[RMDB]
RNA sequence: GGGAACGACUCGAGUAGAGUCGAAAACACACCUGGCUAAUUCUUUGUAUUUUCGGUAGAUAGGGGGUUUCGCCAUGUUGCCCAGGCUGGUCUCAAGCUCCUGAGCUCAAGCAAUCUGCCCACCUCGCUGGGCAGGGGAGUUCGCUCCCCUGCCCAGAAAAGAAACAACAACAACAAC
Reactivity to 2A3 in 0.01 (KOAc 150mM, MgCl2 10mM, bicine 150mM(pH8.5), 24C), signal-to-noise 1, nucleotides 027 to 126: c100a000c000a040c000c010u020g020g000c030u050a120a100u110u040c090u090u130u120g220u170a230u030u180u050u060c020g090g020u160a120g030a270u100a130g100g000g020g000g000u040u060u030c020g010c010c000a020u090g000u020u040g060c000c000c000a000g000g000c020u030g020g080u080c020u020c010a000a000g000c020u020c010c050u000g040a000g020c000u040c050a130a000g000c020a000a120u020c060u100g020c000c000c000a040c000c080u060c040g040

Structure probing data (2A3) for a 177-nucleotide construct. 2A3 adducts were read by reverse transcription with SuperScript II with manganese. Conditions: 150 mM KOAc, 10 mM MgCl2 and 150 mM bicine (pH 8.5), 24 C.